[RMDB]
RNA sequence: GGGAACGACUCGAGUAGAGUCGAAAAGUCGCCGCGUCCACAUCAACGCCCAGCGCGGGCGAGGGAUGCGUCCUACGGGGGUGCCCCAUUCGCCGGCAUGGUAGAGGACGGCAAGAUUGCCGCGACGCAUACUAGCCCACUUCGGUGGGCUAGUAUGAAAAGAAACAACAACAACAAC
Reactivity to 2A3 in 0.01 (KOAc 150mM, MgCl2 10mM, bicine 150mM(pH8.5), 24C), signal-to-noise 2, nucleotides 027 to 126: g030u010c010g000c050c020g050c050g010u000c010c010a060c000a170u070c050a120a090c070g050c000c000c010a080g030c300g040c160g240g020g000c000g000a030g030g000g000a060u170g020c000g050u020c010c000u010a100c200g180g020g000g010g030u070g000c000c000c030c000a100u140u070c010g000c000c010g090g000c040a050u030g030g000u060a040g010a070g080g020a010c000g000g000c020a010a030g180a230u180u270g010c030c030g000c000g000a000c010g010
Reactivity to DMS in 0.01 (KOAc 150mM, MgCl2 10mM, bicine 150mM(pH8.5), 24C), signal-to-noise 4, nucleotides 027 to 126: g000u000c020g020c020c130g000c040g000u000c020c030a100c120a060u010c050a070a130c130g010c060c000c020a090g020c140g020c060g020g010g010c000g010a010g000g010g020a070u000g020c010g010u010c010c020u000a110c190g050g010g020g020g010u000g000c020c020c010c010a200u010u000c010g000c000c010g010g010c020a110u010g010g000u000a110g000a130g010g010a060c020g010g020c070a080a120g000a130u000u000g020c030c070g010c020g020a030c080g000
An RNA of 177 nucleotides, treated with 2A3 and DMS and read out base by base. For 2A3 the reverse transcriptase was SuperScript II with manganese. Source: RMDB library OK2TRN, as collected in RNAgym. The 2A3 profile rests on 4,251 reads.